[RMDB]
RNA sequence: GGGAACGACUCGAGUAGAGUCGAAAAACACAGACAUGAGAUUCAGGGAACAACAGAGCCACACGUCAGAAACUUCCGUCAGCCGGACCUCCGGCACUGUAACCCUUUACCUGCCGGUAUCCACAUCAAUUCAAGACGGUUUCGACCGUCUUGAAUUAAAAGAAACAACAACAACAAC
Reactivity to 2A3 in 0.01 (KOAc 150mM, MgCl2 10mM, bicine 150mM(pH8.5), 24C), signal-to-noise 4, nucleotides 027 to 126: a000c030a010c010a000g080a050c060a060u150g040a050g040a060u030u070c030a020g030g010g030a080a080c040a040a030c010a040g050a030g050c030c020a030c020a030c050g050u060c030a010g080a040a090a020c010u090u020c020c010g060u050c040a020g050c030c020g040g010a070c000c010u080c010c000g000g000c000a010c010u010g010u030a010a040c000c000c000u010u060u080a070c020c010u010g040c010c000g020g010u040a040u050c020c010a090c010a110u130c080
Reactivity to DMS in 0.01 (KOAc 150mM, MgCl2 10mM, bicine 150mM(pH8.5), 24C), signal-to-noise 4, nucleotides 027 to 126: a050c060a070c150a090g000a110c060a080u020g020a130g000a090u020u010c070a100g000g000g000a060a070c130a070a080c060a040g000a070g000c040c030a020c060a050c050g010u000c040a090g000a080a050a140c080u000u000c050c010g010u000c080a090g000c050c030g000g030a070c120c190u000c050c000g000g010c030a040c070u030g030u010a030a080c070c020c060u000u020u030a060c060c120u000g010c030c020g000g000u010a090u000c030c020a070c170a100u010c130